Overview
Source: RMDB library OK2TRN, as collected in RNAgym. This 177-nucleotide RNA was probed chemically with DMS and 2A3. DMS adducts were read by reverse transcription with MarathonRT. DMS (dimethyl sulfate) methylates the pairing face of unpaired adenines and cytosines.
RNA sequence: GGGAACGACUCGAGUAGAGUCGAAAAGUCGCUGGAGAUGAGUGUGCCUACUUCACUGUCACCAUCACAGGUGGGGGGCCAGGUGGGCCUCGGAGGCACAGGGGAAGGUGCCCCUGCUCCCACUGGAGUUAGAAGGAGUGUUCGCACUCCUUCUAACAAAAGAAACAACAACAACAAC
Reactivity to DMS in 0.01 (KOAc 150mM, MgCl2 10mM, bicine 150mM(pH8.5), 24C), signal-to-noise 5, nucleotides 027 to 126: g000u000c080g040c050u010g010g010a090g010a080u010g000a050g000u010g010u010g010c010c020u010a070c030u000u010c140a100c060u000g000u000c030a040c030c010a050u010c230a110c210a110g000g010u000g000g000g000g010g030g010c080c090a090g020g030u000g020g010g000c050c020u000c040g010g010a070g000g010c050a160c030a060g000g000g000g010a180a090g000g010u010g010c010c010c000c010u000g010c090u010c000c000c020a110c080u000g000g000a300
Reactivity to 2A3 in 0.01 (KOAc 150mM, MgCl2 10mM, bicine 150mM(pH8.5), 24C), signal-to-noise 3, nucleotides 027 to 126: g070u030c030g000c040u030g140g120a070g010a100u060g030a040g100u100g010u140g070c010c030u030a060c030u050u080c060a060c110u120g200u180c010a010c030c000a020u130c060a030c030a130g010g020u020g010g010g020g010g000g010c050c030a050g060g070u110g060g000g010c000c010u010c020g020g020a020g010g000c040a010c000a020g000g030g000g030a100a150g220g050u180g070c000c000c000c020u010g010c010u040c000c010c010a020c020u020g030g020a040